[RMDB]
RNA sequence: GGGAACGACUCGAGUAGAGUCGAAAACAGGACUAGGGCCCUCAACCGUCGCCUGGAAGCCCUAUCCAUGACCAAGUACAGUUCCCAAGACUCAGGACUCAACCGCGUGGGUCUGGCGGCGCCGGGCGUUAAGAGUCCUUUUCGAAGGACUCUUAACAAAAGAAACAACAACAACAAC
Reactivity to 2A3 in 0.01 (KOAc 150mM, MgCl2 10mM, bicine 150mM(pH8.5), 24C), signal-to-noise 3, nucleotides 027 to 126: c020a020g010g000a010c090u040a010g000g020g010c020c000c020u050c070a080a160c030c000g040u030c000g000c020c020u020g040g020a080a010g010c000c010c000u010a000u000c000c000a070u070g070a070c030c040a040a010g070u100a130c070a090g010u030u020c020c000c010a010a020g030a040c040u020c100a030g100g050a080c020u020c130a060a150c050c060g060c070g110u050g000g000g020u030c030u030g030g010c000g000g020c010g000c000c010g070g030g010c070
Reactivity to DMS in 0.01 (KOAc 150mM, MgCl2 10mM, bicine 150mM(pH8.5), 24C), signal-to-noise 4, nucleotides 027 to 126: c090a080g010g010a040c190u000a040g020g010g030c010c100c070u010c100a100a120c080c030g000u000c070g010c010c020u000g010g000a140a140g010c010c000c020u010a060u010c020c010a080u010g000a220c030c030a090a080g020u000a110c200a140g020u000u000c010c000c000a140a090g010a070c040u000c060a070g010g000a070c070u000c110a070a100c120c120g010c070g020u000g000g010g020u000c020u000g010g020c040g010g010c020g010c080c020g000g010g030c260